Chemical mapping of a 177-nucleotide RNA with DMS and 2A3. Values are in units of 0.01, from 0 to 300, in steps of 10. DMS adducts were read by reverse transcription with MarathonRT.
[RMDB]
RNA sequence: GGGAACGACUCGAGUAGAGUCGAAAAAAUCGUAGCAGCUGUGGCAUUCCACUGUGGGAAAGGAAGUGUUACACAGUUAAAUACCUCUUUCUUAUCCAAGAAGAAAGUGGGCAUGUGUGUGACAGACCGUACUAGCGGUAUUCGUACCGCUAGUACGAAAAGAAACAACAACAACAAC
Reactivity to DMS in 0.01 (KOAc 150mM, MgCl2 10mM, bicine 150mM(pH8.5), 24C), signal-to-noise 4, nucleotides 027 to 126: a050a040u020c070g010u010a090g000c070a040g000c030u000g000u000g010g000c120a120u010u010c010c010a060c040u010g000u000g000g010g000a080a070a040g000g000a090a050g030u000g020u010u000a030c000a020c000a020g020u030u020a050a070a060u010a090c000c000u000c000u000u010u000c000u000u000a080u040c190c230a100a100g010a030a000g000a000a000a010g000u000g000g000g020c100a030u010g020u000g010u010g010u000g000a030c020a020g010a170c180
Reactivity to 2A3 in 0.01 (KOAc 150mM, MgCl2 10mM, bicine 150mM(pH8.5), 24C), signal-to-noise 7, nucleotides 027 to 126: a000a000u190c080g010u040a020g020c020a000g000c040u020g010u030g060g000c010a030u100u010c020c010a080c060u080g050u160g120g040g030a060a090a080g050g030a050a040g080u010g020u080u060a020c020a000c000a010g020u090u080a050a110a030u150a070c000c000u000c000u010u000u000c000u010u040a100u130c070c090a100a070g050a020a000g000a000a100a000g020u100g010g030g010c110a100u120g010u010g000u000g000u010g030a000c010a020g060a020c000